[RMDB]
RNA sequence: GGGAACGACUCGAGUAGAGUCGAAAAGAAAACGAAAGGAAAAACCAAGAAAGAAACUGAAAACACACGCAAAUAAACCAAGGGCAAGGUGUAAGCCAUAAAGCGUGUGAAAACUAAGGAGGAAAAAGAUAAUCGAGGUAUUCGUACCUCGAUUAUCAAAAGAAACAACAACAACAAC
Reactivity to DMS in 0.01 (KOAc 150mM, MgCl2 10mM, bicine 150mM(pH8.5), 24C), signal-to-noise 3, nucleotides 027 to 126: g010a090a060a050a150c110g000a030a040a080g040g000a060a060a110a120a080c030c030a060a130g020a030a070a040g000a130a120a020c040u000g010a090a060a040a140c000a030c000a010c010g020c000a020a070a060u010a090a050a080c120c090a010a120g000g000g000c050a030a040g010g010u010g010u060a050a100g000c010c020a020u010a070a090a010g000c000g010u000g040u030g000a030a070a030a090c140u000a030a040g020g010a100g000g000a050a080a030a110a020
Reactivity to 2A3 in 0.01 (KOAc 150mM, MgCl2 10mM, bicine 150mM(pH8.5), 24C), signal-to-noise 3, nucleotides 027 to 126: g030a000a070a020a010c170g100a150a020a000g090g050a000a030a040a060a000c010c030a020a040g110a110a140a030g090a020a120a000c090u120g000a070a080a040a000c010a030c000a000c010g020c010a150a180a050u210a170a090a060c050c170a070a040g040g030g000c020a050a000g040g000u100g040u190a090a020g000c020c000a010u120a010a040a000g000c000g000u000g000u020g000a030a030a000a000c020u120a100a020g040g040a040g010g060a110a080a010a010a000
Record summary:
An RNA of 177 nucleotides, treated with DMS and 2A3 and read out base by base. The DMS profile rests on 3,925 reads. High 2A3 reactivity points to a flexible backbone, as in loops and unpaired stretches.